Chemical mapping of a 177-nucleotide RNA with DMS and 2A3.
RNA sequence: GGGAACGACUCGAGUAGAGUCGAAAAGUAAUGGCUGACGCCUUAGGCGUCGCCAAAGCUACGAUUAGCUAUGAGUUGGACCGGGUUAAACCUUAUGAUCCAGAAUUAGCUCAGCAAGAUGCAGAUCCAGGUUAGGACUUUUCGAAGUCCUAACCUGAAAAGAAACAACAACAACAAC
Reactivity to DMS in 0.01 (KOAc 150mM, MgCl2 10mM, bicine 150mM(pH8.5), 24C), signal-to-noise 1, nucleotides 027 to 126: g020u010a020a270u000g000g020c000u000g040a000c000g000c000c000u010u010a090g030g030c000g030u000c010g050c000c000a000a030a240g010c020u000a080c040g000a170u040u000a110g020c040u010a020u010g000a130g020u000u000g000g000a120c040c020g000g010g020u000u000a070a010a300c120c000u010u000a080u010g020a010u010c030c040a090g000a030a250u000u010a040g010c010u000c110a050g020c100a090a120g000a010u010g010c060a270g000a050u030c060
Reactivity to 2A3 in 0.01 (KOAc 150mM, MgCl2 10mM, bicine 150mM(pH8.5), 24C), signal-to-noise 1, nucleotides 027 to 126: g040u000a040a040u020g010g050c170u200g000a000c010g000c000c000u030u140a140g040g000c010g000u000c000g030c000c010a000a000a000g000c020u060a030c020g050a050u100u000a010g000c000u040a050u220g020a050g090u060u030g040g010a010c000c070g090g000g000u050u180a140a170a100c000c050u090u130a170u280g050a100u040c000c020a030g030a040a200u120u070a000g000c020u000c020a030g000c020a080a050g060a110u150g060c020a010g030a110u000c050
The reactions ran in a buffer of 150 mM KOAc, 10 mM MgCl2 and 150 mM bicine (pH 8.5), at 24 C. DMS adducts were read by reverse transcription with MarathonRT. For 2A3 the reverse transcriptase was SuperScript II with manganese. For DMS, 809 sequencing reads were counted.